The data come from the RNA Mapping Database (RMDB), library ARCHII. Structure probing data (DMS and 2A3) for a 207-nucleotide construct.

RNA sequence: GGGAACGACUCGAGUAGAGUCGAAAAUUUCUCUCGUAAAUAAAAUUUGCAUUUUAAUAGUCGCAAACGACGAAACUUACGCUCUAGCUGCCUAAGGGCAGUUUGUCCGCUUCCUAGAAUACUUGUGGUUUAGGAACCCGACCGUAGCGCACGCACACGUACAGUAUAGGUUCGCCUAUACUGUACGAAAAGAAACAACAACAACAAC
Reactivity to DMS in 0.01 (KOAc 150mM, MgCl2 10mM, bicine 150mM(pH8.5), 24C), signal-to-noise 1, nucleotides 027 to 156: u000u000u000c020u010c000u000c090g000u000a060a110a130u000a020a130a110a300u000u000u010g020c000a130u000u000u060u000a030a230u000a100g010u000c070g000c030a090a050a080c050g020a100c050g000a070a020a080c070u000u000a030c030g000c000u000c040u000a070g020c000u000g020c010c000u010a090a160g050g030g040c010a020g000u000u000u000g010u000c010c040g010c050u030u000c040c000u010a050g000a040a070u000a070c110u010u000g050u000g020g010u000u000u000a040g010g000a060a050c000c020c050g020a050c030c040g010u000a070g010c000g000c040a050c040g040c030a130c090a130
Reactivity to 2A3 in 0.01 (KOAc 150mM, MgCl2 10mM, bicine 150mM(pH8.5), 24C), signal-to-noise 3, nucleotides 027 to 156: u020u030u000c010u000c010u000c020g010u040a040a080a090u090a040a150a180a060u120u070u100g000c030a040u030u030u100u220a210a190u220a090g040u060c050g000c130a070a050a090c030g100a000c000g030a110a030a010c040u070u090a040c020g010c020u010c010u020a000g010c020u000g000c020c010u050a060a090g050g000g000c010a000g000u030u040u040g020u000c000c020g040c050u010u000c020c000u040a040g060a140a110u110a140c090u120u130g090u260g170g040u030u040u030a020g000g020a030a030c020c030c020g020a020c040c030g050u060a030g020c000g010c020a010c030g060c000a030c010a010

DMS adducts were read by reverse transcription with MarathonRT.